[RMDB]
RNA sequence: GGGAACGACUCGAGUAGAGUCGAAAAGAGGGGUGGCAGUUUGGACUCGCAGCUUAUGCGUUGAAGCGCUGGGCUGAGUGGACAAGUACUGGCUUCAGCAGUACGCGUGUCGAGUUCAGCAGCCACAGCGAGUUUCAUCCUUCGGGAUGGAAUUCGCAAAAGAAACAACAACAACAAC
Reactivity to 2A3 in 0.01 (KOAc 150mM, MgCl2 10mM, bicine 150mM(pH8.5), 24C), signal-to-noise 9, nucleotides 027 to 126: g140a020g010g090g010g000u010g000g000c020a030g010u140u220u100g010g000a000c000u000c010g020c000a000g000c000u060u050a080u300g030c050g030u050u160g150a160a030g030c010g000c050u090g000g020g000c000u010g020a050g080u210g080g070a030c020a060a010g000u010a010c000u020g110g050c000u130u120c060a060g020c000a000g010u010a010c020g040c080g060u090g060u120c030g000a000g000u000u000c000a000g000c010a000g000c000c000a000c000a000
Reactivity to DMS in 0.01 (KOAc 150mM, MgCl2 10mM, bicine 150mM(pH8.5), 24C), signal-to-noise 9, nucleotides 027 to 126: g010a090g010g010g010g040u000g010g010c000a060g030u000u030u010g010g010a000c000u000c000g010c010a040g000c000u000u010a010u040g010c030g010u000u030g020a110a100g000c000g010c000u030g000g000g000c000u000g000a120g020u040g020g000a040c040a090a250g010u000a010c000u000g000g010c100u020u020c150a100g010c000a060g000u000a010c030g000c270g010u020g010u030c010g000a020g000u000u000c000a020g000c010a070g010c000c000a010c020a050
Structure probing data (2A3 and DMS) for a 177-nucleotide construct. For DMS the reverse transcriptase was MarathonRT. For DMS, 100,315 sequencing reads were counted. The reactions ran in a buffer of 150 mM KOAc, 10 mM MgCl2 and 150 mM bicine (pH 8.5), at 24 C. 2A3 adducts were read by reverse transcription with SuperScript II with manganese.